RNA sequence: GGGAACGACUCGAGUAGAGUCGAAAACACAACUGCGAAGGGGGGACGGAGAAGGCUAUGUUGGCCGGGCCACGGUUGUCCCGGUUUAAGCGUGUAGGCUGGUUUUCCAGGCAAAUCCGGAAUUGAAUUGUCAAGAACAGUUCGCUGUUCUUGACAAAAAAGAAACAACAACAACAAC
Reactivity to DMS in 0.01 (KOAc 150mM, MgCl2 10mM, bicine 150mM(pH8.5), 24C), signal-to-noise 1, nucleotides 027 to 126: c050a100c090a080a080c090u010g000c090g010a050a090g000g010g000g010g000g000a050c050g010g010a050g000a080a080g020g020c030u000a020u000g010u000u000g000g010c010c000g000g010g030c140c050a070c190g000g000u000u010g000u000c030c000c010g000g000u010u000u000a050a080g000c060g000u010g010u010a050g020g010c020u000g000g000u010u000u030u000c040c020a080g010g000c070a070a080a110u010c010c000g000g000a080a100u010u010g000a070a130